[RMDB]
RNA sequence: GGGAACGACUCGAGUAGAGUCGAAAACGACUUAAACAUGAAGAAAUUAGUUAAGGAGAUGACAAAAUGACAGCACCACAUAUGCCGAUGAUGAAUGAUGAAGGACUGCUGGAGUGCCCAUUCUGUGGCAGCAAUGACGCAUACAAUGACAAAAACAAUGCAUAAGAUACUUCGGUAUCUUAUGCAUAAAAGAAACAACAACAACAAC
Reactivity to DMS in 0.01 (KOAc 150mM, MgCl2 10mM, bicine 150mM(pH8.5), 24C), signal-to-noise 4, nucleotides 027 to 156: c060g000a100c030u000u010a080a080a130c060a140u000g010a080a050g000a090a100a150u000u000a090g010u000u010a080a110g000g000a120g020a040u000g010a070c080a040a060a060a110u000g020a080c070a100g010c070a140c050c110a100c120a130u000a070u000g020c020c030g030a050u000g010a030u020g010a030a070u010g010a050u010g000a090a120g030g000a090c130u000g020c040u000g010g020a160g060u000g000c010c010c020a160u000u000c100u000g010u000g050g020c010a040g010c040a060a020u000g010a060c040g020c090a080u000a060c070a050a090u000g000a090c060a020a060a070a040a100c080a090
Reactivity to 2A3 in 0.01 (KOAc 150mM, MgCl2 10mM, bicine 150mM(pH8.5), 24C), signal-to-noise 5, nucleotides 027 to 156: c030g030a010c020u080u150a030a060a030c040a070u070g040a020a020g030a030a160a110u130u110a070g030u030u060a040a050g080g040a160g080a160u040g010a020c020a030a150a030a060u060g020a020c020a030g030c040a040c060c020a090c060a040u200a020u120g040c040c050g060a050u060g010a000u000g010a080a050u090g010a000u000g010a050a010g020g010a010c040u020g000c020u030g040g030a070g160u040g040c000c000c000a050u160u080c040u110g070u130g050g000c000a000g000c000a010a020u040g010a000c010g000c020a020u060a070c010a020a060u100g080a030c030a040a060a240a010a000c070a030